[RMDB]
RNA sequence: GGGAACGACUCGAGUAGAGUCGAAAAGCAGAUUCACUCACUGUAGACUCUGAGCGCAGAGUGUCAGUCGUGCUACCACAUGCACGUGAUCAGAGUAUGUGUGAACUCUGACUGACGACACAAUCGCUUGUGUCCUAUAUAAUGAAUCUGGUGAGUCCGCAGUGGAUAGUUUCGACUAUCCACUGCGAAAAGAAACAACAACAACAAC
Reactivity to 2A3 in 0.01 (KOAc 150mM, MgCl2 10mM, bicine 150mM(pH8.5), 24C), signal-to-noise 5, nucleotides 027 to 156: g050c000a000g000a000u000u010c000a010c040u020c010a100c040u010g000u010a000g010a010c000u010c010u020g030a070g160c060g000c040a000g010a010g020u000g000u000c000a000g010u010c000g020u000g020c020u100a160c020c050a070c020a070u040g000c000a000c070g080u150g090a140u170c080a020g010a020g040u040a050u120g120u030g040u040g060a050a020c010u010c040u080g010a020c000u000g000a000c010g010a000c010a000c000a010a170u290c060g000c180u020u020g000u000g000u000c000c000u000a010u000a000u010a030a030u030g010a000a000u000c000u010g080g120u050g040a050g080u070c050